[RMDB]
RNA sequence: GGGAACGACUCGAGUAGAGUCGAAAACUUAAAUUAAAGUGCCACAGAGACGAAUCUAUUUAGAAAUAAAUAGAGUGAAACGCGGUAAACCCCUCAAGCUAGCAACCCAAAUUAGGUAGGGGCACAUGGGUAUAGGAAGAUUCGUCUUCCUAUACCCAAAAGAAACAACAACAACAAC
Reactivity to DMS in 0.01 (KOAc 150mM, MgCl2 10mM, bicine 150mM(pH8.5), 24C), signal-to-noise 2, nucleotides 027 to 126: c060u000u030a060a120a100u040u020a040a050a090g010u020g000c000c010a060c100a070g000a080g040a060c010g000a140a070u000c000u000a000u000u000u000a010g000a140a130a190u000a000a000a000u000a000g000a000g000u020g000a060a070a110c000g020c090g030g020u000a030a110a170c100c000c000c000u020c040a040a070g000c010u000a040g000c140a050a080c000c000c040a060a090a050u010u010a010g010g040u010a140g000g000g010g010c190a090c130a100u040
Reactivity to 2A3 in 0.01 (KOAc 150mM, MgCl2 10mM, bicine 150mM(pH8.5), 24C), signal-to-noise 2, nucleotides 027 to 126: c000u050u050a010a000a090u120u130a160a080a050g070u040g030c000c000a040c020a020g020a000g020a030c030g000a050a090u010c000u000a000u000u030u030a030g000a050a050a000u010a000a000a000u000a010g020a020g000u010g020a070a080a000c110g000c040g000g030u040a110a130a130c000c000c020c010u010c050a090a050g030c000u050a000g050c040a000a190c000c000c000a060a050a140u120u060a070g050g030u100a030g010g000g030g000c020a000c000a130u050
The data come from the RNA Mapping Database (RMDB), library RFM100.
An RNA of 177 nucleotides, treated with DMS and 2A3 and read out base by base.
Values cover nucleotides 27 to 126.